[RMDB]
RNA sequence: GGGAACGACUCGAGUAGAGUCGAAAAUGAAAUCGUCAAACACGUGGAAAGACCAAUCCGGUUCACCGUCGCGACGGCGAAGGUCGCCGGACGACUUCUGGAAUACUUUCGGGUCUCUGAUGUCGCCCCUAAGUAAUGGUUUCGACCAUUACUUAGGAAAAGAAACAACAACAACAAC
Reactivity to 2A3 in 0.01 (KOAc 150mM, MgCl2 10mM, bicine 150mM(pH8.5), 24C), signal-to-noise 9, nucleotides 027 to 126: u090g020a020a030a030u090c040g040u050c090a120a070a050c050a020c090g070u090g030g040a140a060a030g020a040c020c020a020a060u040c030c030g020g000u100u100c070a020c040c010g040u030c010g000c030g080a160c110g110g010c010g010a040a020g070g030u050c020g000c010c000g010g000a010c020g010a010c000u050u010c020u060g050g100a110a050u090a160c040u020u030u030c020g080g020g050u000c020u000c020u060g030a040u120g020u020c020g020c010c000
Reactivity to DMS in 0.01 (KOAc 150mM, MgCl2 10mM, bicine 150mM(pH8.5), 24C), signal-to-noise 9, nucleotides 027 to 126: u010g010a050a070a070u010c030g020u010c070a100a100a110c200a070c080g020u000g000g010a130a110a090g000a070c050c060a100a160u000c060c030g010g000u000u010c110a110c030c010g000u000c010g010c020g010a150c300g010g010c010g000a050a040g010g020u000c230g010c000c010g000g010a010c040g000a070c100u000u000c020u000g010g010a140a100u010a060c110u000u000u000c030g010g000g000u000c020u000c020u000g000a040u000g000u000c020g000c040c020